[RMDB]
RNA sequence: GGGAACGACUCGAGUAGAGUCGAAAACUUUGUAUUCUUCCACAGCUUUCUUGAACUGCAUCUAUUACAGAACUGGUAGUAGUGCUUUUGCUUCCUUGCAAUUGCUUGCAUGCCACUGUACGGCUGGACGUUACGGAUAAUUCGUUAUCCGUAACGUAAAAGAAACAACAACAACAAC
Reactivity to DMS in 0.01 (KOAc 150mM, MgCl2 10mM, bicine 150mM(pH8.5), 24C), signal-to-noise 7, nucleotides 027 to 126: c070u010u010u010g010u000a100u010u000c030u010u010c050c080a120c090a080g000c040u000u000u000c030u010u000g010a090a150c080u010g000c030a050u030c040u000a050u010u010a030c030a060g010a140a120c170u010g010g010u000a040g010u000a020g010u000g010c010u000u000u000u000g010c020u010u020c110c120u010u000g000c030a020a050u010u000g000c020u010u000g000c020a050u020g000c040c010a070c060u000g010u000a050c140g000g020c040u000g000g010
Reactivity to 2A3 in 0.01 (KOAc 150mM, MgCl2 10mM, bicine 150mM(pH8.5), 24C), signal-to-noise 9, nucleotides 027 to 126: c020u060u060u110g040u090a240u040u030c020u070u020c020c030a050c010a060g010c020u060u140u070c030u100u160g070a120a070c040u070g020c030a060u030c050u100a100u090u060a040c020a050g130a300a100c090u140g040g000u010a010g010u000a020g040u020g030c000u010u020u010u020g010c020u110u100c060c030u060u100g000c000a030a070u030u050g020c020u010u040g010c020a050u140g010c000c000a030c020u040g020u070a050c060g030g000c020u020g020g030